[RMDB]
Structure probing data (2A3 and DMS) for a 177-nucleotide construct. 2A3 adducts were read by reverse transcription with SuperScript II with manganese. It was measured as part of the RMDB library OK2TRN. DMS adducts were read by reverse transcription with MarathonRT. For DMS, 1,119 sequencing reads were counted. The 2A3 profile rests on 1,170 reads.
RNA sequence: GGGAACGACUCGAGUAGAGUCGAAAAAAAUGCUUGCUGGUGAUACGGCCCAGACGCAUUGCGAGCAGCGAUCGGAUGUACAGCUCGAUGUCGAACAUACUGUCUUGGAUCAGUUCGAACGGGACCGGGUUGAUACUUGGUUCGCCAAGUAUCAACCAAAAGAAACAACAACAACAAC
Reactivity to 2A3 in 0.01 (KOAc 150mM, MgCl2 10mM, bicine 150mM(pH8.5), 24C), signal-to-noise 1, nucleotides 027 to 126: a000a000a000u090g030c030u060u110g050c020u080g090g000u030g000a060u040a170c030g030g030c000c190c090a070g040a080c020g020c030a030u010u070g020c100g020a020g020c010a000g020c000g030a070u040c030g060g060a030u030g090u160a060c060a010g000c000u000c030g020a040u080g050u070c010g040a090a030c020a070u120a090c040u090g050u070c060u050u160g140g000a150u140c010a080g030u140u130c050g060a050a050c050g000g040g000a010c040c030g050
Reactivity to DMS in 0.01 (KOAc 150mM, MgCl2 10mM, bicine 150mM(pH8.5), 24C), signal-to-noise 1, nucleotides 027 to 126: a040a030a030u000g000c030u000u000g020c010u000g000g030u000g010a090u010a070c050g000g000c060c030c030a070g020a100c080g010c070a030u000u000g020c000g000a020g030c010a060g010c080g000a100u000c030g000g010a100u000g020u000a080c120a210g020c020u000c030g000a060u020g010u000c010g000a000a160c040a100u000a080c090u010g000u000c060u000u010g030g000a040u010c030a090g000u010u000c120g070a060a070c070g000g010g010a030c040c180g010